RNA sequence: GGGAACGACUCGAGUAGAGUCGAAAACGUCGCCGCAAUCGUGCUGAGGCGACCAUGACUCAGAGUUUGUGGCAGGAAAUCGGUUCAGUGUCACUUAGUUUAGUGAAUGAGGAUUACUGGAACAGUAAAGGACAGGGUUAUUCGUAACCCUGUCCUUAAAAGAAACAACAACAACAAC
Reactivity to 2A3 in 0.01 (KOAc 150mM, MgCl2 10mM, bicine 150mM(pH8.5), 24C), signal-to-noise 1, nucleotides 027 to 126: c040g050u030c070g000c010c000g000c020a030a040u060c000g140u090g130c010u040g000a010g060g010c020g050a040c010c000a060u170g060a050c010u030c020a010g000a010g060u010u060u000g040u010g020g030c000a030g000g140a030a110a050u130c080g050g000u020u000c050a040g010u000g080u020c010a040c190u060u050a130g100u190u180u030a120g030u090g160a080a030u090g000a030g070g040a030u070u210a090c030u050g080g020a030a030c020a020g060u080a020
Reactivity to DMS in 0.01 (KOAc 150mM, MgCl2 10mM, bicine 150mM(pH8.5), 24C), signal-to-noise 3, nucleotides 027 to 126: c100g020u000c130g010c000c000g040c010a040a040u000c090g020u010g000c020u000g010a050g010g010c040g000a040c230c130a020u010g000a060c020u000c040a040g000a150g000u000u000u010g040u000g010g000c000a120g000g010a040a120a040u010c020g010g000u000u000c010a040g010u000g000u000c000a060c010u010u010a120g000u010u010u000a080g020u010g010a050a050u010g010a060g000g010a080u010u010a060c040u000g010g010a070a040c060a080g000u010a040